Background: Chemical mapping of a 177-nucleotide RNA with 2A3 and DMS. The RNA was probed in 150 mM KOAc, 10 mM MgCl2 and 150 mM bicine (pH 8.5) at 24 C. For 2A3, 39,073 sequencing reads were counted. It was measured as part of the RMDB library OK2TRN.
[RMDB]
RNA sequence: GGGAACGACUCGAGUAGAGUCGAAAAUCACAGCAACAGUGAAGCACACAUCACAUCGCAUGCUUUGGCUGUGGAUAUGGUGUCGUGAAUGCAGCCGGCAUUAUAUUGUCCGACUCCUUUUCACUGACCUAUAGUUUUACUUCGGUAAAACUAUAGGAAAAGAAACAACAACAACAAC
Reactivity to 2A3 in 0.01 (KOAc 150mM, MgCl2 10mM, bicine 150mM(pH8.5), 24C), signal-to-noise 9, nucleotides 027 to 126: u060c010a030c020a070g100c030a040a110c000a040g010u010g030a020a010g040c010a010c000a000c000a030u030c000a010c010a030u020c020g010c060a050u260g020c040u150u140u260g210g000c010u010g010u040g110g010a000u010a010u020g010g010u010g010u040c140g000u030g080a160a090u200g010c050a000g020c010c000g020g000c010a010u110u090a170u100a070u200u110g070u050c010c000g020a020c020u040c020c020u090u070u020u030c020a020c010u020g060a070
Reactivity to DMS in 0.01 (KOAc 150mM, MgCl2 10mM, bicine 150mM(pH8.5), 24C), signal-to-noise 9, nucleotides 027 to 126: u000c040a100c140a100g010c150a110a200c030a020g020u000g000a020a030g010c010a020c010a020c020a020u000c020a020c060a030u000c020g010c010a030u010g040c010u000u020u030g030g010c000u000g010u000g010g010a020u000a050u000g000g020u000g010u010c150g020u000g010a080a060u010g010c280a020g010c010c000g000g000c010a020u000u010a130u010a100u010u000g000u010c010c000g010a030c020u010c060c040u000u000u000u000c000a020c000u000g010a220
Reactivities are given for positions 27 through 126.